[RMDB]
RNA sequence: GGGAACGACUCGAGUAGAGUCGAAAAUGCAACGAAGGCCCCCCCUUUUGGGGGGAAUAAGCUUAGGAAGAGAUAAUGUAAGCAAACACAGACAAACACAAAGGCUUCCUCUGCCGCGUGUCGUUGUAUUAUGAAAAUACUUCGGUAUUUUCAUAAUAAAAGAAACAACAACAACAAC
Reactivity to 2A3 in 0.01 (KOAc 150mM, MgCl2 10mM, bicine 150mM(pH8.5), 24C), signal-to-noise 9, nucleotides 027 to 126: u060g000c000a000a000c010g010a020a010g170g010c000c010c000c000c000c000c010u070u180u300u280g010g000g000g000g000g000a000a000u040a010a000g000c000u010u020a000g000g020a010a010g020a010g030a050u060a130a060u150g050u100a050a070g080c080a130a160a030c080a020c030a110g220a130c070a060a130a000c030a010c020a100a090a010g070g000c000u020u010c000c000u000c010u020g010c020c020g030c030g040u180g050u030c010g010u000u010g010u000
Reactivity to DMS in 0.01 (KOAc 150mM, MgCl2 10mM, bicine 150mM(pH8.5), 24C), signal-to-noise 8, nucleotides 027 to 126: u020g010c000a010a000c010g000a060a060g020g000c020c000c000c000c000c000c070u000u010u030u020g030g000g020g010g000g000a010a010u020a080a160g000c010u000u000a020g000g000a010a010g000a020g000a030u010a170a160u010g010u010a060a250g000c130a100a100a090c170a090c190a110g000a130c120a060a150a040c070a040c050a030a130a210g000g000c010u000u000c000c000u000c000u000g000c010c060g000c050g000u050g010u000c010g010u000u010g010u000

Chemical mapping of a 177-nucleotide RNA with 2A3 and DMS. For 2A3 the reverse transcriptase was SuperScript II with manganese. DMS adducts were read by reverse transcription with MarathonRT. Source: RMDB library OK1LIB, as collected in RNAgym. For DMS, 18,555 sequencing reads were counted. Conditions: 150 mM KOAc, 10 mM MgCl2 and 150 mM bicine (pH 8.5), 24 C.